[RMDB]
Notes:
An RNA of 207 nucleotides, treated with DMS and 2A3 and read out base by base.
RNA sequence: GGGAACGACUCGAGUAGAGUCGAAAAGAAAGAAAGAAAGAAACCGUCUCUGCUAGUCUCACGGUAACCACGUUGAAAUCGCAACGAAAGAAGCUCGCACUCAAUUUCAACGGCUUAACGAGUGCAAAAAACUUACUGAUCUUCGGAUCAGUAAGAACAUACUUCGAAAGUUCGCUUUCGAAGUAUGAAAAGAAACAACAACAACAAC
Reactivity to DMS in 0.01 (KOAc 150mM, MgCl2 10mM, bicine 150mM(pH8.5), 24C), signal-to-noise 1, nucleotides 027 to 156: g030a130a120a140g010a060a060a130g000a170a150a200g010a090a060a130c020c060g000u000c000u000c000u000g020c060u000a080g010u000c010u010c020a070c040g000g000u000a020a080c010c050a020c070g000u000u000g020a030a040a000u000c020g000c020a060a050c000g010a020a070a300g010a200a240g030c250u000c050g060c030a060c110u000c020a100a080u000u010u010c000a010a000c000g000g000c030u000u010a020a090c100g000a050g030u000g010c010a000a020a090a020a040a060c000u000u000a020c000u000g000a000u000c000u000u000c300g000g000a020u000c000a030g010u010a000a000g020a060a130
Reactivity to 2A3 in 0.01 (KOAc 150mM, MgCl2 10mM, bicine 150mM(pH8.5), 24C), signal-to-noise 3, nucleotides 027 to 156: g040a050a060a000g080a070a100a000g060a080a180a030g060a060a070a040c060c010g040u000c040u010c010u070g030c030u030a040g040u050c020u010c090a060c030g020g020u040a040a030c030c010a010c020g010u000u010g020a030a050a060u090c050g000c100a060a040c070g050a040a090a090g040a060a010g080c080u210c210g030c030a010c000u010c020a000a090u020u040u010c010a020a010c010g050g000c020u080u080a080a000c050g010a000g010u030g000c030a150a080a000a000a000a000c000u010u000a000c000u010g000a010u000c000u030u090c230g070g000a000u000c000a000g000u010a000a000g000a010a010

Reactivities are rounded to 0.1 and cut off at 0 and 3.